Chemical mapping of a 177-nucleotide RNA with DMS. Reactivities are given for positions 27 through 126. The reactions ran in a buffer of 150 mM KOAc, 10 mM MgCl2 and 150 mM bicine (pH 8.5), at 24 C.
RNA sequence: GGGAACGACUCGAGUAGAGUCGAAAAGAACCAGGCUUCGGCCUGGUUCAUAAUAACGCGGGCGUGGGAGACAGCCGGAGCUGGCCUCGGAUAGUCUCAGUAUAAUCUUAGCCUUCGGGCUAAGAAAUCUAGCUAGUUACUUCGGUAACUAGCUAGAAAAAGAAACAACAACAACAAC
Reactivity to DMS in 0.01 (KOAc 150mM, MgCl2 10mM, bicine 150mM(pH8.5), 24C), signal-to-noise 1, nucleotides 027 to 126: g010a030a010c000c020a010g020g000c000u010u020c260g020g040c000c000u010g000g010u000u000c010a000u000a090a060u010a130a140c070g010c080g010g010g000c040g020u000g030g020g010a030g000a070c040a060g010c020c030g000g020a050g000c050u010g000g000c080c000u000c030g000g010a050u020a090g000u000c010u000c000a160g010u000a100u010a040a210u000c000u000u000a000g000c000c000u010u010c180g000g010g010c000u000a030a000g000a000a040a030
In probing experiments dimethyl sulfate is read out at A N1 and C N3, which are open when not base-paired. DMS adducts were read by reverse transcription with MarathonRT.